Chemical mapping of a 177-nucleotide RNA with DMS and 2A3. 2A3 adducts were read by reverse transcription with SuperScript II with manganese. For DMS, 2,909 sequencing reads were counted. Reactivities are given for positions 27 through 126. The RNA was probed in 150 mM KOAc, 10 mM MgCl2 and 150 mM bicine (pH 8.5) at 24 C.
RNA sequence: GGGAACGACUCGAGUAGAGUCGAAAAACAACGAGAACCGCAAUACGAUCACUGAAAGACUGUGUCAUUUACAUCGAGGCUUAUUCCACCACGUAUUGUCGAUGCAAGACGCUCAACUAAGCUAAAACGUCACUAAAAUCUUCGGAUUUUAGUGACGAAAAGAAACAACAACAACAAC
Reactivity to DMS in 0.01 (KOAc 150mM, MgCl2 10mM, bicine 150mM(pH8.5), 24C), signal-to-noise 2, nucleotides 027 to 126: a120c060a120a080c040g000a110g000a080a090c000c050g000c010a050a040u060a080c070g000a120u000c030a040c020u010g010a090a050a090g010a060c050u040g000u000g040u020c030a040u000u000u000a070c080a030u000c000g020a050g040g010c000u000u000a090u000u000c020c020a150c010c030a130c100g010u020a020u000u000g000u040c000g020a030u000g000c100a090a040g000a020c100g010c040u000c040a070a030c220u030a010a060g010c040u000a020a050a080a120
Reactivity to 2A3 in 0.01 (KOAc 150mM, MgCl2 10mM, bicine 150mM(pH8.5), 24C), signal-to-noise 6, nucleotides 027 to 126: a000c050a000a010c060g070a030g010a160a030c020c030g000c010a020a010u060a080c020g040a030u080c030a020c050u120g050a050a020a030g070a050c050u060g020u040g030u090c060a090u020u030u120a070c060a080u060c040g030a050g030g000c030u070u070a040u110u000c010c010a050c010c010a060c070g010u020a080u060u090g090u080c040g030a020u080g020c000a070a020g050a030c030g000c010u040c030a040a130c050u130a090a020g040c000u040a040a050a030a030